[RMDB]
RNA sequence: GGGAACGACUCGAGUAGAGUCGAAAAGCUGGUCCGGCUUGGCCCCAGCGAACACUUGACGAACGGAUAGUCCCGUCUUGUGGAUUAGGACGUUCUAGGUCCGGUCUGACCCCUAGUUCGUCCGAAACGGGAGUAAUUACUUCGGUAAUUACUCCCGAAAAGAAACAACAACAACAAC
Reactivity to 2A3 in 0.01 (KOAc 150mM, MgCl2 10mM, bicine 150mM(pH8.5), 24C), signal-to-noise 7, nucleotides 027 to 126: g020c010u030g020g070u130c070c040g020g070c110u070u150g110g040c030c010c000c000a030g040c020g060a050a010c010a000c010u010u030g020a020c010g010a140a000c040g040g120a140u120a210g100u230c040c040c000g010u010c000u010u020g020u010g010g040a050u050u180a060g000g000a000c000g000u000u000c000u000a010g000g010u090c120c040g060g030u070c160u130g290a300c020c000c000c000u010a000g000u000u000c000g000u000c000c000g010a000a010a010
Reactivity to DMS in 0.01 (KOAc 150mM, MgCl2 10mM, bicine 150mM(pH8.5), 24C), signal-to-noise 4, nucleotides 027 to 126: g010c000u000g000g010u030c090c090g000g010c040u010u010g020g030c050c020c000c080a080g010c150g010a120a080c020a010c010u010u020g000a010c010g000a070a020c040g000g010a180u080a160g010u000c170c060c010g020u010c020u000u010g000u020g020g000a120u030u010a080g000g010a000c020g000u000u000c000u000a010g020g010u040c140c110g000g000u020c110u020g000a120c080c060c010c020u000a000g010u000u000c000g000u000c010c000g000a030a040a110